This 177-nucleotide RNA was probed chemically with DMS and 2A3.
[RMDB]
RNA sequence: GGGAACGACUCGAGUAGAGUCGAAAAAGGUGUGUCCGUGUGGCAUCGGAGAGUGAUGCUCCGGGAGUACAGCGUUAGCUUGAGGAUCGCCAGUGGAUCUGGACUCAAGUUCUUCCACUGACAUCAAUCAACUCAAGGGGUUCGCUCCUUGGGUUGAAAAAGAAACAACAACAACAAC
Reactivity to DMS in 0.01 (KOAc 150mM, MgCl2 10mM, bicine 150mM(pH8.5), 24C), signal-to-noise 1, nucleotides 027 to 126: a080g000g000u000g000u000g000u000c030c020g000u040g000u060g000g000c030a020u000c010g000g000a080g000a160g030u030g000a050u040g000c000u000c000c000g030g040g020a110g040u060a080c070a040g010c150g010u000u020a140g020c150u030u000g020a270g000g020a230u090c300g050c090c040a060g010u000g060g050a300u100c030u010g000g000a080c000u000c060a000a120g030u000u000c190u020u000c000c000a230c020u000g050a250c000a200u000c150a030a300
Reactivity to 2A3 in 0.01 (KOAc 150mM, MgCl2 10mM, bicine 150mM(pH8.5), 24C), signal-to-noise 2, nucleotides 027 to 126: a000g080g040u040g010u020g000u000c010c010g070u130g050u110g110g010c000a020u020c030g080g030a130g010a030g140u230g080a020u040g010c010u000c010c000g000g010g030a060g050u060a030c010a040g020c010g030u020u010a010g000c000u020u010g010a020g000g070a120u130c120g000c000c000a000g000u030g200g020a040u030c060u070g000g020a000c000u040c130a090a020g000u070u040c000u110u000c000c000a110c050u100g040a040c000a070u150c000a000a300

The RNA was probed in 150 mM KOAc, 10 mM MgCl2 and 150 mM bicine (pH 8.5) at 24 C. For 2A3 the reverse transcriptase was SuperScript II with manganese.